[RMDB]
RNA sequence: GGGAACGACUCGAGUAGAGUCGAAAACUUGAGCAGGAUCCUGAAGAAGGCAGAGGGGGAUGGGAUCCAGCCCAGUUUGUGGGGCAGUUUGGGAAAGGAGAAGGGACCAUUAUUUCUGUGAGACAGGUGUACCUUUAGUUUUCGAACUAAAGGUACAAAAAGAAACAACAACAACAAC
Reactivity to DMS in 0.01 (KOAc 150mM, MgCl2 10mM, bicine 150mM(pH8.5), 24C), signal-to-noise 7, nucleotides 027 to 126: c040u000u000g020a060g020c060a110g010g010a040u000c020c020u000g000a110a110g010a090a080g000g010c090a060g010a130g010g000g010g010g010a100u010g010g000g000a050u000c020c030a110g010c000c010c020a070g000u000u010u010g010u000g020g010g010g000c050a060g010u000u010u010g020g000g000a060a080a090g010g010a080g000a080a090g000g000g010a100c090c050a050u000u010a080u000u010u000c020u000g000u010g010a120g020a290c110a040g000g010
Reactivity to 2A3 in 0.01 (KOAc 150mM, MgCl2 10mM, bicine 150mM(pH8.5), 24C), signal-to-noise 3, nucleotides 027 to 126: c010u080u130g010a020g000c040a030g010g060a060u040c000c010u100g030a040a050g060a060a060g120g000c070a050g060a120g060g040g010g020g020a010u060g010g020g000a010u000c000c010a000g020c010c000c000a010g010u050u090u120g120u080g030g020g010g000c020a010g020u090u130u080g030g000g000a040a080a080g050g010a060g010a040a050g020g000g030a000c020c010a030u070u080a040u060u220u010c050u010g070u040g050a070g020a050c010a010g030g060

Conditions: 150 mM KOAc, 10 mM MgCl2 and 150 mM bicine (pH 8.5), 24 C. An RNA of 177 nucleotides, treated with DMS and 2A3 and read out base by base. The 2A3 profile rests on 3,543 reads.